[RMDB]
RNA sequence: GGGAACGACUCGAGUAGAGUCGAAAAAAAGAUAUGGACGUGUGAACUACUCCUCAGGAUCCCAACAGCUGCGUUCGGAAACGAACGCAGACAUGGGAGAAUUUGGAGCACACGUCCUAAGUCAAAAGACUUAAGACAGGUUCGCCUGUCUUAAGUCAAAAGAAACAACAACAACAAC
Reactivity to DMS in 0.01 (KOAc 150mM, MgCl2 10mM, bicine 150mM(pH8.5), 24C), signal-to-noise 1, nucleotides 027 to 126: a070a030a070g030a030u000a300u000g000g000a010c020g000u000g020u040g000a060a040c030u000a300c010u000c010c000u000c040a020g000g020a300u000c000c000c000a050a170c300a200g000c000u000g000c000g040u000u000c000g000g000a100a140a150c000g050a000a000c000g000c000a000g020a010c100a180u000g000g000g000a000g000a300a210u000u000u000g070g070a020g000c000a000c000a000c000g000u000c000c000u000a000a100g000u000c040a060a080a170a170